About this RNA:
Source: RMDB library M2PK90, as collected in RNAgym. The record gives the reactivity of an RNA of 177 nucleotides to 2A3 and DMS. High DMS reactivity at an A or C suggests that its Watson-Crick edge is free. 2A3 adducts were read by reverse transcription with SuperScript II with manganese.
RNA sequence: GGGAACGACUCGAGUAGAGUCGAAAAGAAGCCGCGAAAAAUGCGUGUAAAUAAAAGGUCAAUAUGACCUGACAGUGAUACCAAAUUAAAUGGGUCGAAGUCUCGCCAAAAUACGCAACAAAUAGAACCUGUAUAGAGUGUUCGCACUCUAUACAGGAAAAGAAACAACAACAACAAC
Reactivity to 2A3 in 0.01 (KOAc 150mM, MgCl2 10mM, bicine 150mM(pH8.5), 24C), signal-to-noise 2, nucleotides 027 to 126: g070a050a010g090c010c020g010c060g080a150a040a060a000a060u070g000c020g000u060g010u090a000a110a120u150a040a090a010a000g000g000u000c010a030a150u170a160u300g000a020c000c000u000g010a010c020a020g040u010g130a010u160a300c020c010a010a050a070u130u140a060a120a130u090g000g010g000u000c000g000a080a000g000u000c010u010c070g010c020c000a060a110a000a000u060a050c020g000c010a030a000c040a070a170a040u190a030g120a100a050
Reactivity to DMS in 0.01 (KOAc 150mM, MgCl2 10mM, bicine 150mM(pH8.5), 24C), signal-to-noise 2, nucleotides 027 to 126: g000a170a160g000c040c060g020c120g010a020a110a110a080a100u010g010c020g010u000g020u000a040a070a060u020a050a060a080a040g000g000u000c000a170a120u000a110u030g020a010c000c000u000g000a030c060a070g010u040g000a020u000a070c010c000a030a080a100u000u000a040a140a080u000g000g010g030u000c020g010a090a100g020u000c000u000c040g000c060c060a050a080a050a050u010a010c030g000c010a070a030c150a050a080a050u010a110g000a100a140

Reactivities are given for positions 27 through 126. Reactivities are rounded to 0.1 and cut off at 0 and 3. The RNA was probed in 150 mM KOAc, 10 mM MgCl2 and 150 mM bicine (pH 8.5) at 24 C.